[RMDB]
RNA sequence: GGGAACGACUCGAGUAGAGUCGAAAACGGUGGCCGCAAGCCCUACCGGCAGAAGGGGACCGGUCGUGCCCGGCAGGGCUCGACGCGGGCGCCGCAGUUCACCGGCGGUGGCGUGGUACACGGUCCCGCGUUGACAACCAUUCGUGGUUGUCAACGCAAAAGAAACAACAACAACAAC
Reactivity to DMS in 0.01 (KOAc 150mM, MgCl2 10mM, bicine 150mM(pH8.5), 24C), signal-to-noise 1, nucleotides 027 to 126: c040g010g060u000g010g000c040c000g010c060a120a240g020c010c000c010u000a030c040c020g000g040c080a300g030a070a120g000g000g000g000a070c010c000g010g000u010c010g000u010g000c050c000c000g050g020c300a040g020g010g020c000u000c030g010a040c030g000c030g000g000g010c110g000c000c010g010c030a060g000u000u000c020a060c010c010g010g000c200g040g020u000g030g000c090g000u000g000g020u000a050c100a130c020g010g010u000c000c000c010
Reactivity to 2A3 in 0.01 (KOAc 150mM, MgCl2 10mM, bicine 150mM(pH8.5), 24C), signal-to-noise 2, nucleotides 027 to 126: c050g100g000u000g030g010c020c020g020c110a120a010g000c010c000c010u000a020c000c000g000g070c060a040g010a060a030g060g010g030g010a000c010c010g000g010u000c010g030u020g000c040c000c000g040g080c200a250g050g000g000c000u010c030g050a060c140g080c090g300g000g000c120g080c000c020g110c010a030g030u040u000c010a000c030c000g000g000c020g000g040u200g020g000c020g010u030g020g000u100a240c020a000c040g080g010u040c000c020c010
This 177-nucleotide RNA was probed chemically with DMS and 2A3. 2A3 adducts were read by reverse transcription with SuperScript II with manganese. For 2A3, 1,664 sequencing reads were counted. Values cover nucleotides 27 to 126. The data come from the RNA Mapping Database (RMDB), library OK2TRN. The DMS profile rests on 1,321 reads. Values are in units of 0.01, from 0 to 300, in steps of 10.